[RMDB]
RNA sequence: GGGAACGACUCGAGUAGAGUCGAAAAUACGCUAAGUUCGCUUAGCGUAAAAUAUAUGGGACUAUAUUAAACCUGAUAGCCGUAGAAGAUCAUGUAUCGGCAAAAUCACCAUCUUCGGAUGGUGAAAUAGUACAGACUCUUUCGAGAGUCUGUACUAAAAAGAAACAACAACAACAAC
Reactivity to 2A3 in 0.01 (KOAc 150mM, MgCl2 10mM, bicine 150mM(pH8.5), 24C), signal-to-noise 1, nucleotides 027 to 126: u050a000c000g000c010u020a000a000g020u010u070c110g090c110u010u000a000g020c000g010u000a000a000a000a000u010a000u000a030u010g030g040g070a040c070u040a040u010a000u200u000a130a160a120c000c030u080g050a110u030a040g000c000c010g000u050a040g080a290a040g040a090u100c050a060u300g080u150a020u080c010g020g000c010a000a000a060a110u000c000a020c010c010a000u000c020u010u040c260g180g000a000u000g000g030u030g000a000a000a000
Reactivity to DMS in 0.01 (KOAc 150mM, MgCl2 10mM, bicine 150mM(pH8.5), 24C), signal-to-noise 1, nucleotides 027 to 126: u000a010c010g030c000u000a000a020g030u000u000c300g010c000u000u000a020g020c000g000u000a030a060a030a010u020a020u000a070u010g000g020g020a280c060u000a090u020a050u000u000a050a120a220c000c000u010g000a190u000a160g000c010c020g010u020a130g000a130a040g010a040u010c080a090u000g020u000a090u010c030g010g010c010a030a070a040a090u000c000a020c000c000a020u000c000u000u000c170g000g000a040u000g010g000u000g000a000a000a030

Structure probing data (2A3 and DMS) for a 177-nucleotide construct. It was measured as part of the RMDB library M2PK50. Reactivities are given for positions 27 through 126. For DMS the reverse transcriptase was MarathonRT.